Chemical mapping of a 207-nucleotide RNA with DMS and 2A3. The data come from the RNA Mapping Database (RMDB), library OK3TST. The reactions ran in a buffer of 150 mM KOAc, 10 mM MgCl2 and 150 mM bicine (pH 8.5), at 24 C. 2A3 adducts were read by reverse transcription with SuperScript II with manganese.
[RMDB]
RNA sequence: GGGAACGACUCGAGUAGAGUCGAAAAUUGUGGCCAACGCGCCGACGACCAUCCUGGCGAUGUCGAGUUUGAUGACCUCGAAGGACGCUGAUCCCAGAGGGAGCGCGUUUCGACGGAUAACGAAUAGCCGCAGAUGGUAGGAAAGACGAUCCAGCAAGUACAAUAAUGCUUUCGAGCAUUAUUGUACAAAAGAAACAACAACAACAAC
Reactivity to DMS in 0.01 (KOAc 150mM, MgCl2 10mM, bicine 150mM(pH8.5), 24C), signal-to-noise 4, nucleotides 027 to 156: u000u000g030u020g020g020c020c050a070a080c070g010c030g030c020c000g010a140c060g010a060c000c000a050u000c020c050u010g010g010c000g000a110u010g010u000c030g030a190g000u000u010u000g020a200u010g010a110c030c020u000c010g000a140a080g000g000a040c020g020c050u010g020a130u000c000c010c020a300g010a170g020g020g010a060g020c040g020c030g020u010u000u000c000g010a200c080g010g010a070u000a050a190c070g000a080a100u000a220g010c010c000g010c110a110g000a040u010g010g010u000a060g030g000a060a090a140g000a110c040g000a100u010c050c010a180g000c070a080a300
Reactivity to 2A3 in 0.01 (KOAc 150mM, MgCl2 10mM, bicine 150mM(pH8.5), 24C), signal-to-noise 8, nucleotides 027 to 156: u070u070g040u060g040g000c010c020a190a100c120g020c040g000c020c010g020a050c010g010a000c010c010a000u000c000c030u080g040g000c040g030a070u170g030u040c030g020a070g100u060u120u200g190a200u120g080a070c010c000u000c010g000a020a020g090g010a020c010g040c150u120g050a180u050c030c010c040a070g120a150g060g040g000a050g050c020g000c010g000u010u010u030c030g010a050c080g030g020a070u060a180a040c020g000a020a020u030a050g010c010c010g000c030a010g020a030u010g000g020u030a040g010g070a060a110a000g090a020c050g020a040u030c010c010a010g050c050a130a060